[RMDB]
RNA sequence: GGGAACGACUCGAGUAGAGUCGAAAAUGUAAAACGCCUGAUGAAGAUGGGAAAACCGGCCCUGAACGAUCCAGAAACGGACGUGGACAGAUGCCGCGCACUGCGCGAAGAAGUGGAAAGCUGGUACACUCCCAAUGUAGUUCGCUACAUUGGGAGUAAAAGAAACAACAACAACAAC
Reactivity to 2A3 in 0.01 (KOAc 150mM, MgCl2 10mM, bicine 150mM(pH8.5), 24C), signal-to-noise 1, nucleotides 027 to 126: u100g000u030a000a000a050a140c100g050c000c030u020g000a050u050g050a030a110g020a030u160g010g000g030a070a070a000a000c000c000g060g030c020c000c000u050g020a080a000c020g040a180u000c020c050a000g100a130a090a010c040g010g020a010c050g050u060g010g030a040c000a010g110a050u180g050c070c000g000c010g030c070a130c180u170g010c000g010c000g000a060a010g070a080a000g040u040g020g110a100a000a060g000c040u020g000g120u040a030c050
Reactivity to DMS in 0.01 (KOAc 150mM, MgCl2 10mM, bicine 150mM(pH8.5), 24C), signal-to-noise 3, nucleotides 027 to 126: u020g010u010a060a060a150a120c140g010c030c030u000g020a110u010g000a040a050g010a100u010g000g000g010a060a030a100a090c100c080g000g020c030c060c040u000g000a070a050c050g000a150u000c030c040a070g000a110a080a140c080g000g000a020c050g010u010g010g000a120c070a070g000a060u000g020c040c030g010c020g000c050a110c160u020g010c030g000c030g000a090a090g010a140a100g010u000g010g000a050a040a100g010c040u000g000g010u020a100c130